[RMDB]
RNA sequence: GGGAACGACUCGAGUAGAGUCGAAAAGAUAUGGACGACUUCGAGGAUCUAUACGGUCGGAAACGACCGAUAGGGAGAAGGUCCUAAGUCAAAGAAUGUAUCUGAGGUUCGCCUCAGAUACAUUCAAGGUCCAAUAACUGUUCGCAGUUAUUGGACCAAAAGAAACAACAACAACAAC
Reactivity to DMS in 0.01 (KOAc 150mM, MgCl2 10mM, bicine 150mM(pH8.5), 24C), signal-to-noise 1, nucleotides 027 to 126: g010a030u000a300u010g020g020a040c000g020a300c000u000u000c010g000a050g030g000a020u020c000u010a000u010a100c010g010g010u000c000g000g000a090a050a210c010g010a010c000c010g030a070u000a010g000g020g000a010g000a040a000g000g030u000c000c020u000a020a160g000u000c050a050a070a130g030a000a010u000g000u000a000u000c000u010g010a000g010g000u020u010c200g010c010c000u010c000a000g020a020u000a000c000a010u010u000c000a120a020
Reactivity to 2A3 in 0.01 (KOAc 150mM, MgCl2 10mM, bicine 150mM(pH8.5), 24C), signal-to-noise 2, nucleotides 027 to 126: g030a010u060a030u270g000g020a030c140g070a170c250u030u000c030g070a300g040g010a010u020c020u010a030u080a230c010g000g020u010c030g030g030a160a100a010c000g000a010c000c000g000a010u000a000g010g000g000a020g000a020a020g020g000u000c040c010u040a300a010g060u040c060a160a000a120g000a000a010u000g000u000a010u000c010u000g000a020g030g010u050u170c280g060c090c000u000c000a010g010a010u000a000c000a000u000u000c000a020a000